[RMDB]
RNA sequence: GGGAACGACUCGAGUAGAGUCGAAAAGGAUUUCAAAUACUCGGUCUGCUUUUGCGACUCUUCGUAGAUGCCGGCGACGGCGAACCAGAGUGCGAACACUACGGCCGUGCAGACGACCCAGGCUCCGGCUACCAUACAAAUUCGUUUGUAUGGUAGCAAAAGAAACAACAACAACAAC
Reactivity to DMS in 0.01 (KOAc 150mM, MgCl2 10mM, bicine 150mM(pH8.5), 24C), signal-to-noise 5, nucleotides 027 to 126: g000g020a090u010u000u000c050a080a110a210u000a060c060u000c040g010g020u010c010u000g010c070u000u010u000u000g010c020g010a040c030u000c020u000u000c110g010u000a070g020a160u010g010c000c010g020g010c270g000a190c040g010g000c010g000a110a040c040c050a100g000a040g020u000g010c020g000a030a050c210a050c080u000a060c150g010g000c020c040g030u000g010c070a060g010a090c070g000a100c090c010c040a090g010g010c060u000c060c110g020
Reactivity to 2A3 in 0.01 (KOAc 150mM, MgCl2 10mM, bicine 150mM(pH8.5), 24C), signal-to-noise 4, nucleotides 027 to 126: g040g030a070u060u200u130c080a090a120a070u140a130c040u030c050g010g030u010c030u050g060c050u080u070u060u130g060c040g100a050c030u000c020u110u080c050g080u090a050g010a210u180g020c000c010g040g010c030g040a080c040g000g020c010g000a020a010c020c030a020g010a020g040u040g020c030g030a070a010c030a020c080u120a040c050g020g000c000c000g000u030g000c010a030g010a100c030g030a040c000c020c000a010g070g000c020u040c040c020g010